[RMDB]
RNA sequence: GGGAACGACUCGAGUAGAGUCGAAAAUGCUGAGCUUUCGAGCUCAGCAGAGGCUAGCAAGCAGCGCAACGAGACAAGACGAGCAUAAGAUCGAGCAUGCUACAAUACGGCACUUCGGUGCCGUAAAAUCACAUCGAUGGUUCGCCAUCGAUGUGAUAAAAGAAACAACAACAACAAC
Reactivity to DMS in 0.01 (KOAc 150mM, MgCl2 10mM, bicine 150mM(pH8.5), 24C), signal-to-noise 2, nucleotides 027 to 126: u000g010c020u000g000a010g010c000u000u000u030c210g000a010g020c000u000c000a000g000c000a000g010a070g010g010c030u000a060g030c070a050a050g030c070a060g000c060g010c060a070a080c080g000a050g000a080c120a030a040g000a050c100g000a060g030c020a030u000a140a050g000a040u000c070g010a060g040c070a050u020g010c070u010a120c140a090a150u000a010c000g000g010c000a000c010u000u020c190g030g000u000g000c020c010g010u000a000a040a050
Reactivity to 2A3 in 0.01 (KOAc 150mM, MgCl2 10mM, bicine 150mM(pH8.5), 24C), signal-to-noise 1, nucleotides 027 to 126: u040g000c000u000g000a000g000c030u080u020u110c130g140a010g000c000u010c000a000g020c000a000g000a000g000g020c060u060a040g050c020a070a020g000c030a010g010c040g020c030a070a030c040g060a060g010a150c040a030a030g040a030c050g040a000g000c000a060u090a130a030g030a090u080c030g020a020g080c010a000u040g010c010u090a030c010a080a070u060a020c000g010g010c010a000c000u060u040c240g050g010u000g000c000c010g000u000a010a000a000

An RNA of 177 nucleotides, treated with DMS and 2A3 and read out base by base.
Source: RMDB library M2PK50, as collected in RNAgym.
Reactivities are given for positions 27 through 126.
The DMS profile rests on 1,335 reads.
The RNA was probed in 150 mM KOAc, 10 mM MgCl2 and 150 mM bicine (pH 8.5) at 24 C.
Reactivities are rounded to 0.1 and cut off at 0 and 3.
DMS (dimethyl sulfate) methylates the pairing face of unpaired adenines and cytosines.
DMS adducts were read by reverse transcription with MarathonRT.